[RMDB]
RNA sequence: GGGAACGACUCGAGUAGAGUCGAAAAUGCUAUUAAUGUUGGUGGUACAGGAUUACAGUAUGCCGCCAUUACUGCACCUUAUGUAGUUCUCACUGGCUUAGGUGAGUCCUUUAAGAAAGUUGCAACCGAAUAUGUGUGUCUUCGGACACACAUAUUCAAAAGAAACAACAACAACAAC
Reactivity to 2A3 in 0.01 (KOAc 150mM, MgCl2 10mM, bicine 150mM(pH8.5), 24C), signal-to-noise 2, nucleotides 027 to 126: u050g010c030u060a080u200u090a200a120u180g010u090u020g020g010u030g020g020u040a040c020a060g080g080a200u240u210a050c030a040g050u090a030u040g060c000c010g000c000c000a000u010u030a040c020u020g000c020a050c030c000u000u010a040u110g160u050a000g010u030u000c000u040c000a020c030u030g060g120c110u180u250a050g010g020u000g020a000g000u030c000c000u090u050u070a150a040g100a080a080a010g050u030u040g000c010a010a010c030c060
Reactivity to DMS in 0.01 (KOAc 150mM, MgCl2 10mM, bicine 150mM(pH8.5), 24C), signal-to-noise 2, nucleotides 027 to 126: u010g000c050u000a050u000u000a080a070u000g030u010u000g010g020u010g020g070u010a030c030a100g020g020a240u000u000a120c150a120g000u010a080u000g000c020c010g000c080c000a020u000u000a010c200u000g000c000a030c060c020u000u000a080u000g000u000a020g010u000u000c010u000c020a040c020u000g010g010c270u000u000a070g000g010u000g010a020g000u000c020c000u000u000u010a040a060g010a060a050a070g000u000u000g000c040a100a090c170c140